[RMDB]
RNA sequence: GGGAACGACUCGAGUAGAGUCGAAAACUCAACGGUGAUCCUCUUCUUGACGCGCUCAAGAAGAAGGUCGGCGUCAAGUAAGGAGAUACACAAAUGGCACUUUCCACUCAGGUAGCACAGACUUCCGCUCCACAUAGUAAUUCGUUACUAUGUGGAGAAAAGAAACAACAACAACAAC
Reactivity to DMS in 0.01 (KOAc 150mM, MgCl2 10mM, bicine 150mM(pH8.5), 24C), signal-to-noise 9, nucleotides 027 to 126: c020u000c040a140a060c100g010g010u000g010a030u000c010c020u000c000u000u000c000u000u000g010a020c040g020c210g010c120u000c020a050a040g000a060a050g010a040a040g000g010u000c020g010g000c010g010u000c070a040a050g010u010a060a060g010g000a060g000a070u000a060c050a050c060a050a060a060u010g000g000c040a050c050u000u000u000c030c020a080c070u000c070a060g000g000u000a050g020c040a060c070a070g000a100c070u000u000c040c080g010
Reactivity to 2A3 in 0.01 (KOAc 150mM, MgCl2 10mM, bicine 150mM(pH8.5), 24C), signal-to-noise 9, nucleotides 027 to 126: c020u020c030a040a000c060g160g300u030g010a010u020c000c000u000c000u010u000c000u000u010g010a010c020g040c030g020c230u010c030a040a100g060a040a040g020a030a010g120g070u030c020g100g020c010g010u040c040a050a040g030u060a080a030g050g030a050g020a050u090a080c040a000c010a040a100a070u090g030g000c020a020c060u040u060u020c030c000a040c030u060c030a020g030g040u040a010g020c030a030c030a150g080a090c010u060u020c020c030g020

Conditions: 150 mM KOAc, 10 mM MgCl2 and 150 mM bicine (pH 8.5), 24 C. This 177-nucleotide RNA was probed chemically with DMS and 2A3. For 2A3, 48,083 sequencing reads were counted. For DMS, 25,224 sequencing reads were counted. Source: RMDB library OK2TST, as collected in RNAgym. Reactivities are rounded to 0.1 and cut off at 0 and 3.